[RMDB]
RNA sequence: GGGAACGACUCGAGUAGAGUCGAAAAUGCGUUGCUGACGUCGUUAACCCAGAUUCAGCAGCUGGCCGACCGCUAUCUUAUCUGGCAGGUGAUUUUGCCGUUGGUUGGCGUCUGGUGUUAUUUGCUAGCAUUAAUUAUCGUUCGCGAUAAUUAAUGCAAAAGAAACAACAACAACAAC
Reactivity to 2A3 in 0.01 (KOAc 150mM, MgCl2 10mM, bicine 150mM(pH8.5), 24C), signal-to-noise 3, nucleotides 027 to 126: u150g000c030g000u040u040g020c010u010g020a050c050g030u090c060g030u080u110a100a080c000c030c000a000g020a100u070u040c010a010g000c010a010g020c040u020g070g000c010c000g030a010c020c030g000c030u030a030u000c020u090u110a060u050c040u090g120g070c050a040g090g000u090g050a090u010u090u070u080g000c010c010g030u010u020g000g010u010u000g000g000c010g030u030c060u030g040g000u100g070u170u080a210u090u120u170g120c100u070a010
Reactivity to DMS in 0.01 (KOAc 150mM, MgCl2 10mM, bicine 150mM(pH8.5), 24C), signal-to-noise 7, nucleotides 027 to 126: u010g000c040g010u000u000g000c010u010g000a050c100g020u000c120g010u000u000a050a110c010c010c000a120g000a120u010u000c030a020g010c020a040g010c030u000g010g010c010c010g010a020c040c170g000c020u000a010u000c060u000u000a030u000c040u010g020g020c100a080g010g010u010g010a090u000u010u010u000g010c000c160g010u000u000g010g010u000u000g000g010c010g010u000c060u000g010g010u000g010u000u000a090u000u000u010g010c080u010a210